[RMDB]
RNA sequence: GGGAACGACUCGAGUAGAGUCGAAAAAACGUUGCAUGAUCGUAAAACAUGCCCGGCUUACCGUGAGCCGCCUUUGAAAGAAAGGUUUACACGGACUCUAUUGCGUUACGCACGUACCUAACUUGUGAAAACGGCAUCUUGUUCGCAAGAUGCCGAAGGUGAAAUAAUAGUUCGCUAUUAUUUCACCAAAAGAAACAACAACAACAAC
Reactivity to DMS in 0.01 (KOAc 150mM, MgCl2 10mM, bicine 150mM(pH8.5), 24C), signal-to-noise 2, nucleotides 027 to 156: a080a050c020g010u000u000g010c000a010u000g000a070u010c020g020u000a040a060a050a000c040a030u010g000c010c040c000g030g010c000u000u000a100c020c080g020u000g000a070g020c020c020g000c000c000u000u000u000g000a190a110a160g000a060a030a030g010g010u020u010u000a130c070a080c020g020g010a160c070u000c040u000a050u010u000g000c020g050u020u010a110c090g000c020a080c070g000u000a060c020c030u000a020a050c090u000u000g000u000g000a060a070a060a190c030g010g010c000a020u000c010u010u000g010u010u000c270g020c000a020a030g030a020u000g050c000c010g000a000a020
Reactivity to 2A3 in 0.01 (KOAc 150mM, MgCl2 10mM, bicine 150mM(pH8.5), 24C), signal-to-noise 9, nucleotides 027 to 156: a000a000c000g000u000u000g000c000a000u000g020a050u190c040g070u210a100a060a000a010c000a000u000g000c000c000c000g000g000c000u030u070a090c010c010g000u000g010a000g000c000c000g010c000c000u030u010u010g070a090a050a000g010a010a010a000g010g000u000u040u030a020c000a000c000g050g010a080c040u070c040u120a130u090u130g020c010g050u060u070a060c160g030c020a010c030g030u060a080c020c040u090a140a170c070u110u080g060u040g140a050a050a020a020c000g000g000c000a000u000c000u010u010g010u040u030c090g020c110a000a000g000a000u000g010c000c000g000a000a000
Chemical mapping of a 207-nucleotide RNA with DMS and 2A3. The DMS profile rests on 5,813 reads. The reactions ran in a buffer of 150 mM KOAc, 10 mM MgCl2 and 150 mM bicine (pH 8.5), at 24 C. It was measured as part of the RMDB library M2RFOK. For 2A3 the reverse transcriptase was SuperScript II with manganese. The 2A3 profile rests on 17,809 reads.